Chemical mapping of a 177-nucleotide RNA with DMS and 2A3. 2A3 is a SHAPE reagent: it acylates the 2'-hydroxyl of flexible nucleotides of all four kinds. The DMS profile rests on 2,132 reads. The reactions ran in a buffer of 150 mM KOAc, 10 mM MgCl2 and 150 mM bicine (pH 8.5), at 24 C. For DMS the reverse transcriptase was MarathonRT. The 2A3 profile rests on 1,797 reads.
[RMDB]
RNA sequence: GGGAACGACUCGAGUAGAGUCGAAAAACCUCAGUCUUCGGACUGAGGUGAGCGGAGCAUGGUGGCCGUGGGAACUCCUCCUUGGUGACAAGGGCCCACCGGGUGCGGCACGCUUCGGCGUGCCGAACUACUCCCCUCAUUUCGAUGAGGGGAGUAGAAAAGAAACAACAACAACAAC
Reactivity to DMS in 0.01 (KOAc 150mM, MgCl2 10mM, bicine 150mM(pH8.5), 24C), signal-to-noise 2, nucleotides 027 to 126: a030c000c000u000c000a010g010u000c000u000u020c200g030g000a010c010u010g010a010g000g010u000g010a050g000c080g000g000a070g010c090a070u000g000g050u000g010g020c030c030g020u000g010g000g020a160a080c060u000c050c020u000c000c000u000u000g010g010u010g020a240c040a010a010g000g000g010c070c010c020a050c070c110g040g000g040u000g030c000g010g070c000a000c000g000c000u000u010c070g020g060c000g050u000g030c000c000g000a010a060
Reactivity to 2A3 in 0.01 (KOAc 150mM, MgCl2 10mM, bicine 150mM(pH8.5), 24C), signal-to-noise 1, nucleotides 027 to 126: a000c000c010u000c000a000g020u020c010u010u120c210g140g000a000c000u010g000a000g000g010u010g010a040g010c070g030g000a020g020c090a090u110g070g020u030g060g030c010c030g000u080g020g020g020a040a030c040u020c020c000u000c000c030u010u050g000g000u100g040a050c020a030a000g030g020g000c010c010c000a020c000c030g040g040g060u100g000c000g030g030c000a010c010g070c000u050u020c250g020g050c010g000u000g000c000c000g000a000a000